[RMDB]
RNA sequence: GGGAACGACUCGAGUAGAGUCGAAAAUUCGCACCACCAGCGGUCGCAGAAGACGACGUUGAACCCGUUAUUUAAAGUGCUGUAGUGUUGUGAAUGUGAUGUAAAAAUACAGUACCUUUUCAUGAGCUGACUGCCUCGACGCGCAAAUUUUUUACUAACUACCUACGAAAUUCGUUUCGUAGGUAGUAAAAGAAACAACAACAACAAC
Reactivity to 2A3 in 0.01 (KOAc 150mM, MgCl2 10mM, bicine 150mM(pH8.5), 24C), signal-to-noise 4, nucleotides 027 to 156: u050u020c000g000c010a040c010c010a000c020c010a010g010c000g070g030u030c020g000c070a030g050a230a000g060a070c040g000a000c040g040u030u070g070a030a080c010c010c000g020u040u030a120u080u130u120a150a110a060g040u030g010c000u020g030u040a090g020u030g020u080u040g020u020g050a100a080u100g030u040g050a050u040g020u100a040a010a050a050a020u050a030c010a000g020u050a040c050c000u020u060u050u060c100a080u140g030a020g010c020u030g060a080c040u060g020c000c010u050c050g030a040c010g010c000g000c050a000a040a070u100u080u020u040u070u140a040c130u150a040
Reactivity to DMS in 0.01 (KOAc 150mM, MgCl2 10mM, bicine 150mM(pH8.5), 24C), signal-to-noise 3, nucleotides 027 to 156: u000u000c040g000c040a120c030c000a110c080c030a080g030c030g040g000u000c010g030c040a190g020a160a160g010a130c000g020a060c050g010u030u010g030a100a120c060c030c050g010u000u000a120u000u000u000a080a060a100g020u000g020c000u000g010u010a070g030u010g010u000u000g020u000g000a060a140u020g040u000g000a130u000g000u000a020a060a070a080a120u000a050c020a060g000u000a030c020c020u000u000u010u010c100a080u010g010a070g050c040u000g020a050c020u010g000c020c010u000c050g030a090c070g020c030g000c040a040a040a030u000u000u000u000u000u000a050c080u010a100